[RMDB]
RNA sequence: GGGAACGACUCGAGUAGAGUCGAAAACAGGACACGCAGCCGUCUGACGCCACCAGCGCCCCUGGGGCAGAGGGGCUGGAGCCUCCUGCGGCUCGGGAGCCGGCUCUUUCCAGGGCUGGUUCUUGCCAUACAUAGUCAUCUUCGGAUGACUAUGUAUAAAAGAAACAACAACAACAAC
Reactivity to DMS in 0.01 (KOAc 150mM, MgCl2 10mM, bicine 150mM(pH8.5), 24C), signal-to-noise 9, nucleotides 027 to 126: c060a060g000g010a070c140a120c120g000c050a030g000c010c020g000u010c040u010g000a250c240g010c010c020a100c020c010a030g010c220g010c190c140c080c010u000g000g010g010g010c030a040g000a200g000g010g000g020c010u000g000g000a160g030c060c140u000c030c030u010g000c050g010g010c050u010c070g010g000g000a020g000c000c010g020g000c010u000c000u000u000u010c250c260a090g010g000g000c010u000g010g010u000u000c000u000u000g010c090c070
Reactivity to 2A3 in 0.01 (KOAc 150mM, MgCl2 10mM, bicine 150mM(pH8.5), 24C), signal-to-noise 1, nucleotides 027 to 126: c030a020g030g040a030c030a020c160g140c050a030g010c020c020g170u100c050u050g030a020c020g020c020c030a300c040c000a040g020c030g180c100c020c000c000u030g000g000g110g000c020a010g030a030g020g020g000g010c010u010g010g020a010g010c010c020u030c010c010u050g020c040g000g000c010u070c080g020g000g000a000g000c000c010g030g010c010u000c000u110u280u040c060c100a020g000g000g010c000u010g010g000u010u010c000u000u060g000c000c010

Source information
Source: RMDB library OK2TRN, as collected in RNAgym. Structure probing data (DMS and 2A3) for a 177-nucleotide construct. The reactions ran in a buffer of 150 mM KOAc, 10 mM MgCl2 and 150 mM bicine (pH 8.5), at 24 C. For 2A3, 9,868 sequencing reads were counted. For DMS the reverse transcriptase was MarathonRT.